[RMDB]
RNA sequence: GGGAACGACUCGAGUAGAGUCGAAAACUACUAUCUGAAAAUAUAUAAUCAAUGCGUAAGGUGGAUAAUGCCCGGUUAUGAUCAGAUAUUACAAAAGGACAUAUUCUUAACAAUAUGUGAUAAGAUAGUUCCAUGUUGAAUUCGUUCAACAUGGAACAAAAGAAACAACAACAACAAC
Reactivity to DMS in 0.01 (KOAc 150mM, MgCl2 10mM, bicine 150mM(pH8.5), 24C), signal-to-noise 1, nucleotides 027 to 126: c030u000a130c130u000a010u020c010u000g000a060a060a100a050u000a130u020a060u000a050a010u020c020a110a150u000g010c050g020u000a090a110g020g050u010g030g000a050u000a070a080u010g010c000c100c080g010g030u000u000a050u000g000a070u000c020a000g000a020u000a010u000u000a130c140a050a100a060a070g000g000a040c040a010u000a010u000u000c080u000u020a100a150c130a030a000u020a000u000g000u000g020a110u000a060a130g040a080u010a110
Reactivity to 2A3 in 0.01 (KOAc 150mM, MgCl2 10mM, bicine 150mM(pH8.5), 24C), signal-to-noise 1, nucleotides 027 to 126: c000u090a020c000u000a000u020c010u020g030a060a010a150a070u170a050u030a020u030a040a050u060c010a080a160u130g030c010g100u120a110a070g060g030u090g090g080a090u070a230a020u150g010c000c000c000g000g000u020u020a040u030g020a010u000c020a000g000a040u000a050u070u100a060c080a030a120a010a090g160g020a000c000a020u020a060u050u020c030u280u170a050a020c020a100a000u000a010u000g030u060g040a100u060a170a040g040a020u110a090